RNA sequence: GGGAACGACUCGAGUAGAGUCGAAAAAGAAAGAGAUCGCAGCUGCGAAAGAGGACGCGUAGGUUCCGAAAUACUCGAAGCAGCUAACCGGAAAACGGAAGGAUCCAUCCCAAAGCGAUCAAAAAAAUCUUACGUCAUUGUUCGCAAUGACGUAAGAAAAAGAAACAACAACAACAAC
Reactivity to DMS in 0.01 (KOAc 150mM, MgCl2 10mM, bicine 150mM(pH8.5), 24C), signal-to-noise 2, nucleotides 027 to 126: a030g000a100a010a090g000a160g000a010u000c020g070c020a020g020c000u000g030c000g000a030a130a300g020a070g000g000a130c200g010c170g020u020a050g010g040u010u010c080c010g000a060a040a040u000a150c000u000c020g000a110a240g040c020a000g010c000u010a050a080c010c030g000g000a050a090a130a170c040g000g000a070a080g000g020a100u010c060c050a170u000c040c020c000a050a050a070g020c020g000a000u030c020a000a020a040a070a060a080a100